[RMDB]
Chemical mapping of a 177-nucleotide RNA with 2A3 and DMS. The reactions ran in a buffer of 150 mM KOAc, 10 mM MgCl2 and 150 mM bicine (pH 8.5), at 24 C. Source: RMDB library OK1LIB, as collected in RNAgym. The DMS profile rests on 1,580 reads. 2A3 adducts were read by reverse transcription with SuperScript II with manganese.
RNA sequence: GGGAACGACUCGAGUAGAGUCGAAAAUGUGAUGUGAUCGCUAUGCCUGUAUGCGCAACGCCUGCCAUCAGAGAUCAGGAUGUUUUGGAUCCGGUUUCUCUAUAUCUACAGGAUGUUUAUACCGUAGAUCCGAUCGUGAGUUCGCUCACGAUCGGAUAAAAGAAACAACAACAACAAC
Reactivity to 2A3 in 0.01 (KOAc 150mM, MgCl2 10mM, bicine 150mM(pH8.5), 24C), signal-to-noise 2, nucleotides 027 to 126: u020g010u050g120a100u090g150u090g040a040u000c040g070c020u070a030u090g040c040c020u020g010u030a100u070g080c160g000c020a050a000c000g080c030c050u040g020c070c000a040u020c160a120g000a000g000a080u040c030a070g040g000a030u070g030u220u030u170u040g270g000a090u000c000c020g080g020u000u170u000c040u020c060u010a170u030a060u080c060u040a030c060a110g000g000a000u010g120u040u220u000a130u020a110c060c050g060u030a000g000
Reactivity to DMS in 0.01 (KOAc 150mM, MgCl2 10mM, bicine 150mM(pH8.5), 24C), signal-to-noise 1, nucleotides 027 to 126: u030g040u000g020a000u000g020u020g000a020u000c000g000c030u020a000u000g000c090c020u060g020u030a080u050g000c000g030c010a080a100c020g000c040c000u010g010c080c080a170u000c130a060g000a080g000a080u000c030a070g010g020a090u000g000u000u050u030u040g000g000a040u060c010c020g070g030u010u000u000c000u000c080u000a080u010a070u020c020u030a050c050a090g000g030a050u000g000u000u010u020a000u070a100c070c000g000u000a110g010